[RMDB]
An RNA of 177 nucleotides, treated with 2A3 and DMS and read out base by base. For DMS the reverse transcriptase was MarathonRT. It was measured as part of the RMDB libraries RFM100 and RFMREP. For 2A3 the reverse transcriptase was SuperScript II with manganese. The reactions ran in a buffer of 150 mM KOAc, 10 mM MgCl2 and 150 mM bicine (pH 8.5), at 24 C.

RNA sequence: GGGAACGACUCGAGUAGAGUCGAAAAGACCUGUUGCAAAUAACGGAUUAUCCUCGAAAUCGAGCCGUAUGGUCAGACAGACAACUUUAGGGUUAUAUAGAUAGUGCAAUGAGAUAUAACCUAGUAACAUACCUAAUCGAUUCGUCGAUUAGGUAUGAAAAGAAACAACAACAACAAC
Reactivity to 2A3 in 0.01 (KOAc 150mM, MgCl2 10mM, bicine 150mM(pH8.5), 24C), signal-to-noise 9, nucleotides 027 to 126: g030a040c000c000u010g040u020u040g020c050a030a070a100u100a130a000c010g010g010a020u100u120a090u230c030c010u020c020g080a180a140a140u230c030g000a010g020c000c000g020u040a070u060g060g000u080c010a000g050a040c020a020g070a030c040a080a060c090u130u160u290a080g000g020g000u000u000a000u000a000u000a020g110a100u060a070g110u100g110c070a070a110u180g030a100g090a120u010a000u010a010a000c000c000u010a040g050u060a040a020
Reactivity to DMS in 0.01 (KOAc 150mM, MgCl2 10mM, bicine 150mM(pH8.5), 24C), signal-to-noise 9, nucleotides 027 to 126: g010a050c020c000u010g010u000u000g010c040a040a060a070u010a040a040c020g000g000a160u000u030a120u030c300c000u000c030g010a160a110a100u030c030g010a020g000c010c010g010u000a030u000g000g000u000c030a080g010a130c140a100g000a070c130a040a080c110u010u010u010a130g000g000g000u000u010a000u000a010u000a030g000a060u000a070g010u000g000c080a040a040u000g010a070g000a010u000a000u000a010a000c010c000u000a090g010u020a060a150